[RMDB]
RNA sequence: GGGAACGACUCGAGUAGAGUCGAAAACAGGUAUCGCAAAGUAUCAUGGAUACCAGGGUCGCAUUGCGAAUGCAGCUACUGAAACUGAUACAAAAUAACUAAUCAUGAGUGAGGAGAACCCGGCGAAUGCUGUCAACGAUACCAACGAAACAGAUCCACUAUUACGGCAGUUCGCUGCCGUAAUAGUAAAAGAAACAACAACAACAAC
Reactivity to 2A3 in 0.01 (KOAc 150mM, MgCl2 10mM, bicine 150mM(pH8.5), 24C), signal-to-noise 4, nucleotides 027 to 156: c030a010g000g030u000a010u020c010g070c120a000a070a070g010u040a020u050c030a060u130g000g040a040u050a130c020c010a010g020g000g010u070c030g000c030a070u030u300g130c080g100a120a020u050g000c010a020g030c030u190a240c010u250g010a040a080a030c030u010g020a020u020a030c040a040a090a020a100u270a090a020c110u090a060a050u080c040a060u090g020a010g060u070g020a050g040g000a070g020a070a080c030c010c000g010g000c010g030a040a030u140g040c040u040g060u110c050a040a040c060g000a010u040a020c010c010a040a040c100g040a120a030a000c030a050g040a070u070c030c060
Reactivity to DMS in 0.01 (KOAc 150mM, MgCl2 10mM, bicine 150mM(pH8.5), 24C), signal-to-noise 2, nucleotides 027 to 156: c050a120g020g030u000a010u000c000g030c050a030a110a170g030u000a010u000c020a130u000g070g010a120u020a090c060c020a050g020g000g040u010c000g020c030a050u000u010g030c150g000a090a020u000g000c040a040g010c000u000a210c020u000g000a110a060a260c070u000g000a040u000a140c060a040a100a020a110u000a060a110c000u010a050a100u010c020a060u010g010a140g000u010g000a060g020g030a150g000a050a100c060c000c010g000g040c020g000a140a130u000g000c010u010g000u000c000a040a050c000g010a020u000a040c000c030a110a130c100g000a090a020a090c050a070g000a180u000c010c020